[RMDB]
Annotation
Structure probing data (DMS and 2A3) for a 207-nucleotide construct.

RNA sequence: GGGAACGACUCGAGUAGAGUCGAAAACGCUGGGUUGAUCGGGCUCACAAGUGGACAUGCCACGUUCUGAAGCGCGCACGGAACUAUGGCAACAGCCACUUGUGAGUCUCUAGCGUGUCAACCUGUGCUGAAGCGCGCACGGCAACCGAAAGGUGCGGUAAUUGCAUAGCUUCGGCUAUGCAAUUACAAAAGAAACAACAACAACAAC
Reactivity to DMS in 0.01 (KOAc 150mM, MgCl2 10mM, bicine 150mM(pH8.5), 24C), signal-to-noise 1, nucleotides 027 to 156: c080g040c040u000g000g030g070u010u000g010a070u010c100g030g000g020c000u010c030a000c030a010a040g020u000g010g020a100c120a300u000g000c000c010a050c170g010u010u000c010u020g020a060a050g000c080g000c000g030c000a300c010g000g000a030a020c010u000a100u010g020g020c010a050a090c150a100g000c000c000a010c010u020u010g000u010g000a050g020u000c000u020c020u000a100g050c020g000u020g000u000c030a040a040c010c020u000g020u000g060c030u020g010a070a090g010c010g000c000g060c060a170c020g000g030c030a150a120c020c060g010a140a140a210g030g010u010g000c050g000
Reactivity to 2A3 in 0.01 (KOAc 150mM, MgCl2 10mM, bicine 150mM(pH8.5), 24C), signal-to-noise 3, nucleotides 027 to 156: c030g050c020u060g040g030g000u050u080g040a060u120c060g070g030g000c010u020c000a000c000a000a000g000u000g010g010a060c060a210u170g000c010c000a060c090g000u000u000c000u030g100a270a090g000c000g000c010g000c060a020c030g000g000a040a000c000u100a160u300g010g010c000a080a050c080a130g030c000c000a000c000u000u000g000u030g000a000g000u000c000u010c000u000a010g030c010g000u080g010u030c000a010a020c000c020u070g080u080g040c030u140g020a070a050g010c010g000c000g000c010a020c020g090g000c040a140a110c020c000g070a140a050a030g050g000u060g050c050g010

Values cover nucleotides 27 to 156.
The reactions ran in a buffer of 150 mM KOAc, 10 mM MgCl2 and 150 mM bicine (pH 8.5), at 24 C.